[RMDB]
RNA sequence: GGGAACGACUCGAGUAGAGUCGAAAACCCAUAAGUAAUAAAAGGUCCGUUUAGGUCCCUUAACUUUAUUUAAAGUAUCGGUUUGGUCCUUUCUGUUAAUUUAAUUCAAAAAAACGUUAAGUUUAGGAAAUGACUUAACAUUCGUGUUAAGUCAUUUAAAAGAAACAACAACAACAAC
Reactivity to 2A3 in 0.01 (KOAc 150mM, MgCl2 10mM, bicine 150mM(pH8.5), 24C), signal-to-noise 4, nucleotides 027 to 126: c010c000c000a000u090a020a020g030u030a030a140u060a060a110a010a020g020g020u020c010c050g070u070u170u170a080g030g040u040c040c030c000u010u030a030a020c010u000u060u120a150u070u150u130a130a100a040g030u040a040u130c040g040g020u050u030u190g060g000u060c030c000u030u020u030c100u030g030u050u040a010a080u030u030u110a060a120u060u110c150a030a030a100a050a040a000a000c020g030u050u060a050a120g000u010u030u070a030g040g020
Reactivity to DMS in 0.01 (KOAc 150mM, MgCl2 10mM, bicine 150mM(pH8.5), 24C), signal-to-noise 5, nucleotides 027 to 126: c000c000c020a150u000a080a080g020u010a060a030u020a050a080a080a060g010g000u000c030c020g030u020u020u040a120g020g010u010c140c000c020u010u010a040a060c060u000u000u000a060u020u010u030a030a040a070g000u000a030u010c190g000g000u000u000u000g010g020u000c010c040u000u000u000c090u010g010u000u010a040a060u010u010u020a050a060u010u020c070a000a010a060a100a030a020a050c070g010u020u010a030a120g010u000u000u000a090g010g000